Annotation:
This 177-nucleotide RNA was probed chemically with DMS and 2A3. For DMS the reverse transcriptase was MarathonRT.

RNA sequence: GGGAACGACUCGAGUAGAGUCGAAAAGAAAGCGUUAUUCGGCGAAAGAAGCGUACGAAACGCAAAGAAAAACGUGCGCGUAGGAAUGCGCGACCGACAAGAAACGCCGAGAAUUCGUGCAUGAAAAACUACUGGAUCCAUUCGUGGAUCCAGUAGUAAAAGAAACAACAACAACAAC
Reactivity to DMS in 0.01 (KOAc 150mM, MgCl2 10mM, bicine 150mM(pH8.5), 24C), signal-to-noise 3, nucleotides 027 to 126: g000a200a190a220g000c010g000u020u010a090u050u000c010g000g000c000g000a050a070a060g020a230a130g030c010g040u060a070c120g010a120a080a010c060g000c020a080a160a080g010a080a060a010a070a080c010g020u000g000c010g000c000g020u000a020g000g120a170a060u000g010c000g000c020g020a020c030c010g020a140c240a080a090g040a040a110a160c020g020c020c040g000a000g000a040a120u010u010c000g010u030g050c040a050u020g000a070a020a040a060
Reactivity to 2A3 in 0.01 (KOAc 150mM, MgCl2 10mM, bicine 150mM(pH8.5), 24C), signal-to-noise 3, nucleotides 027 to 126: g030a010a060a000g020c010g040u090u080a190u110u030c010g000g000c010g060a000a170a020g210a170a030g000c020g020u030a040c040g090a060a140a070c020g000c020a010a060a020g030a000a100a000a000a010c000g000u030g020c050g000c010g010u020a050g100g180a170a110u120g000c020g020c010g020a040c040c050g030a050c020a080a090g060a080a100a000c010g010c000c000g030a020g100a040a060u150u020c020g010u020g050c040a070u070g080a070a080a120a000